[RMDB]
RNA sequence: GGGAACGACUCGAGUAGAGUCGAAAAAUACAGCGUAAUCGAGCGGAGGAAAACGGCACUCCGAAAAUCCGGUACGAUUAUGAUCCCACUGCGUCGACGCUAGAUGCAGAACCGGAUUGGCGAGGAAAGCAAGAGAUUAUUUCGAUAAUCUCUUGCUAAAAGAAACAACAACAACAAC
Reactivity to 2A3 in 0.01 (KOAc 150mM, MgCl2 10mM, bicine 150mM(pH8.5), 24C), signal-to-noise 2, nucleotides 027 to 126: a000u170a010c050a020g050c010g040u050a050a050u050c030g010a030g110c020g020g020a030g020g060a080a120a030a040c040g050g000c060a020c060u040c000c010g010a060a030a000a010u000c000c000g020g040u080a080c040g020a030u050u060a050u140g070a050u030c000c000c010a020c020u010g000c000g020u030c020g020a070c080g060c210u090a040g000a030u020g010c000a000g040a030a010c000c000g000g000a020u020u030g040g020c060g020a050g000g090a160a050
Reactivity to DMS in 0.01 (KOAc 150mM, MgCl2 10mM, bicine 150mM(pH8.5), 24C), signal-to-noise 6, nucleotides 027 to 126: a080u000a110c160a080g010c030g020u000a040a020u000c030g010a170g000c030g000g010a080g000g010a050a040a130a090c100g010g010c110a110c090u010c020c010g000a050a060a030a030u000c010c010g010g010u000a140c080g020a030u000u000a030u000g010a090u000c010c000c020a220c040u000g000c010g040u000c000g020a100c210g020c180u000a060g000a020u000g000c030a020g010a110a050c020c010g010g000a030u000u000g000g000c050g000a060g000g000a080a090
Notes
Structure probing data (2A3 and DMS) for a 177-nucleotide construct. It was measured as part of the RMDB library M2PK90. The reactions ran in a buffer of 150 mM KOAc, 10 mM MgCl2 and 150 mM bicine (pH 8.5), at 24 C. For DMS the reverse transcriptase was MarathonRT.